An RNA of 177 nucleotides, treated with DMS and 2A3 and read out base by base. For DMS the reverse transcriptase was MarathonRT. 2A3 adducts were read by reverse transcription with SuperScript II with manganese. The data come from the RNA Mapping Database (RMDB), library RFM100. The DMS profile rests on 1,779 reads.

RNA sequence: GGGAACGACUCGAGUAGAGUCGAAAACGCACGCCUCUCCUGCUAGCCGUGUGGCUCUUAAAGAGCCCCACACCCCUCCGCCCUGCGUGCUCCUCCGACCCCCGCCACCCCUCCCCUCUCCUCCGGAUUAAUCGGACGUAUUCGUACGUCCGAUUAAAAAAGAAACAACAACAACAAC
Reactivity to DMS in 0.01 (KOAc 150mM, MgCl2 10mM, bicine 150mM(pH8.5), 24C), signal-to-noise 1, nucleotides 027 to 126: c120g010c100a050c060g010c010c020u000c000u010c000c010u000g050c000u020a040g010c150c100g000u010g020u010g000g000c030u000c020u030u050a030a120a090g020a010g010c020c040c050c050a070c010a150c090c110c090c010u000c040c060g000c030c030c000u010g000c000g070u000g070c080u040c000c010u000c050c030g000a110c110c040c070c000c050g030c070c000a050c050c000c090c020u000c000c000c000c010u000c040u000c010c010u030c020c000g000g010a260
Reactivity to 2A3 in 0.01 (KOAc 150mM, MgCl2 10mM, bicine 150mM(pH8.5), 24C), signal-to-noise 1, nucleotides 027 to 126: c020g030c000a040c020g000c000c000u020c030u000c010c000u000g030c010u030a030g020c010c030g020u040g010u040g020g000c010u010c030u070u200a240a070a040g010a010g000c000c020c000c000a010c000a000c010c040c000c000u010c010c010g010c010c010c000u010g000c020g020u020g000c020u020c010c000u010c000c020g030a040c060c000c000c000c000g030c020c010a020c000c010c000c000u000c000c000c010c010u010c000u000c010c000u010c030c000g020g010a020